[RMDB]
RNA sequence: GGGAACGACUCGAGUAGAGUCGAAAAGUGAUCUUUCGACGAGAAUGCAAAUGUUGACCGGGUGCAGUGGCUCAUGCCUGUAUUUGCAGCAUUUGGGGAGACUGAGGCAAGCGGAUCGCUUGAGUCCCAAACUGAUUACCUUCGGGUAAUCAGUUUGAAAAGAAACAACAACAACAAC
Reactivity to 2A3 in 0.01 (KOAc 150mM, MgCl2 10mM, bicine 150mM(pH8.5), 24C), signal-to-noise 5, nucleotides 027 to 126: g010u010g020a020u010c010u020u170u150c100g110a130c060g020a080g100a220a090u080g000c010a020a130a040u080g010u030u060g040a080c040c000g010g010g000u010g000c050a110g060u050g080g000c030u080c180a110u300g030c000c000u070g040u100a200u050u150u190g080c040a030g020c010a010u000u050u050g060g020g000g030a040g010a000c020u030g000a020g150g090c010a020a020g030c030g050g010a030u020c010g000c000u010u010g010a010g070u040c000c000
Reactivity to DMS in 0.01 (KOAc 150mM, MgCl2 10mM, bicine 150mM(pH8.5), 24C), signal-to-noise 9, nucleotides 027 to 126: g020u000g000a020u000c010u000u000u010c070g020a170c130g000a180g010a090a130u010g000c020a030a090a080u000g010u000u000g010a300c080c020g000g000g010u010g010c030a080g030u000g010g020c020u010c220a110u010g010c030c010u000g010u000a050u000u010u010g010c080a080g010c020a030u000u000u000g010g020g010g010a300g000a050c030u000g000a270g000g010c040a060a090g010c170g000g010a030u000c020g010c010u000u000g000a110g000u000c000c020